[RMDB]
RNA sequence: GGGAACGACUCGAGUAGAGUCGAAAACAACAGGGAGGUUCGUGGUGGACGAGCCACUCGCCAACCGGGUCAGGUCCGGAAGGAAGCAGCCCUAACGAGCCAGGCACGGGUCGCCGUGCCAGUACAACUGUUCCAUUGGUUUCGACCAAUGGAACAGAAAAGAAACAACAACAACAAC
Reactivity to DMS in 0.01 (KOAc 150mM, MgCl2 10mM, bicine 150mM(pH8.5), 24C), signal-to-noise 1, nucleotides 027 to 126: c050a150a050c090a140g000g000g030a070g010g000u000u000c010g050u000g000g070u000g010g060a080c060g020a020g000c090c110a100c050u000c020g000c010c000a060a100c070c080g010g000g040u000c090a220g020g010u000c010c000g000g010a050a200g000g000a090a020g050c020a160g000c020c010c020u000a110a060c070g000a040g000c020c010a070g000g000c000a000c010g020g000g030u000c300g000c000c000g010u000g020c010c030a090g000u010a050c220a170a250
Reactivity to 2A3 in 0.01 (KOAc 150mM, MgCl2 10mM, bicine 150mM(pH8.5), 24C), signal-to-noise 1, nucleotides 027 to 126: c020a000a040c030a040g100g020g020a060g060g000u030u030c010g000u030g040g170u070g050g080a100c010g020a000g060c020c010a060c000u000c000g000c000c020a080a070c050c060g000g000g030u050c050a010g000g090u050c000c000g000g120a070a050g000g020a010a020g040c030a020g040c000c000c000u060a090a010c060g030a020g040c040c080a080g000g000c000a010c020g000g000g130u260c130g030c170c000g000u000g000c000c010a040g010u000a010c010a110a050